[RMDB]
The data come from the RNA Mapping Database (RMDB), library M2RFOK.
An RNA of 207 nucleotides, treated with DMS and 2A3 and read out base by base.
The DMS profile rests on 3,620 reads.
For 2A3 the reverse transcriptase was SuperScript II with manganese.
The RNA was probed in 150 mM KOAc, 10 mM MgCl2 and 150 mM bicine (pH 8.5) at 24 C.
RNA sequence: GGGAACGACUCGAGUAGAGUCGAAAAGCGGAGCUUGAAACGCGGGUAGCGCGCACGCCCGGCGAAGAAGUUCGCAUACGCGGUGUGCUGGUGCCGAAGUGUCUGCUGCAACGGCACGCUCGACACCUAGAACAUACCGUAUUCGUACGGUAUGUAACAACGGGGUAAUGUUCGCAUUACCCCGUUGAAAAGAAACAACAACAACAAC
Reactivity to DMS in 0.01 (KOAc 150mM, MgCl2 10mM, bicine 150mM(pH8.5), 24C), signal-to-noise 2, nucleotides 027 to 156: g000c020g020g010a150g010c030u000u000g020a170a070a070c030g030c040g010g030g010u000a090g030c060g000c090g080c030a040c040g030c000c010c030g000g010c000g030a040a050g020a210a180g000u000u000c000g020c010a080u000a270c030g010c150g100g010u000g010u010g000c010u010g000g010u000g040c010c030g030a060a140g020u000g000u010c050u010g050c000u010g010c160a150a200c070g020g000c000a020c050g010c050u000c010g000a090c010a020c020c030u000a180g000a140a130c010a000u020a000c000c000g000u000a040u000u010c300g020u000a020c010g020g000u000a000u000g000u000a060a130
Reactivity to 2A3 in 0.01 (KOAc 150mM, MgCl2 10mM, bicine 150mM(pH8.5), 24C), signal-to-noise 4, nucleotides 027 to 156: g030c040g000g030a000g000c050u090u080g070a090a130a010c080g020c040g040g040g030u070a030g040c030g000c010g000c070a000c030g000c000c010c000g010g000c010g010a010a020g060a060a080g170u010u010c010g000c020a020u050a200c040g000c130g000g000u020g000u010g030c050u070g030g040u030g000c000c010g030a060a040g010u040g080u040c050u090g040c040u040g010c060a080a040c020g010g020c010a020c040g020c060u010c010g010a000c010a020c010c010u010a060g040a130a000c000a010u000a000c000c000g000u000a010u040u070c240g040u020a010c000g000g010u010a000u000g000u000a010a020